[RMDB]
RNA sequence: GGGAACGACUCGAGUAGAGUCGAAAAGUGUUAUUGCAGUAUCUCAACCGGCUAUCGGACUGCUUGUAUGCCCUGGCCCGCGAUGAAGACCAACGCCAGACAUUGCAACAAACAGCACACACCGUGGCUUAUUCAGCAGUUUCGACUGCUGAAUAAGAAAAGAAACAACAACAACAAC
Reactivity to 2A3 in 0.01 (KOAc 150mM, MgCl2 10mM, bicine 150mM(pH8.5), 24C), signal-to-noise 4, nucleotides 027 to 126: g040u040g040u200u060a070u080u130g020c010a020g030u060a130u070c080u020c090a060a110c030c010g000g100c120u150a120u290c050g020g050a060c020u010g000c000u040u060g040u050a100u070g010c030c040c000u010g040g000c040c030c000g010c030g050a110u100g090a080a020g030a040c010c060a080a040c070g000c010c010a000g010a030c010a070u080u190g000c000a030a020c010a040a150a030c030a020g040c020a000c000a000c010a020c060c020g060u070g070g010
Reactivity to DMS in 0.01 (KOAc 150mM, MgCl2 10mM, bicine 150mM(pH8.5), 24C), signal-to-noise 5, nucleotides 027 to 126: g030u010g020u000u010a100u000u000g010c050a040g010u000a070u010c030u010c100a090a280c120c060g000g000c120u000a090u000c040g010g010a110c030u000g010c040u010u010g020u010a050u000g010c030c110c010u000g000g000c040c080c060g020c070g010a070u020g000a120a080g010a120c050c030a060a140c170g010c030c040a040g020a060c080a040u000u000g020c040a060a080c110a030a050a060c070a050g010c060a040c070a060c140a130c040c010g010u000g000g000

Source: RMDB library OK2TRN, as collected in RNAgym. Chemical mapping of a 177-nucleotide RNA with 2A3 and DMS. The RNA was probed in 150 mM KOAc, 10 mM MgCl2 and 150 mM bicine (pH 8.5) at 24 C. For 2A3 the reverse transcriptase was SuperScript II with manganese.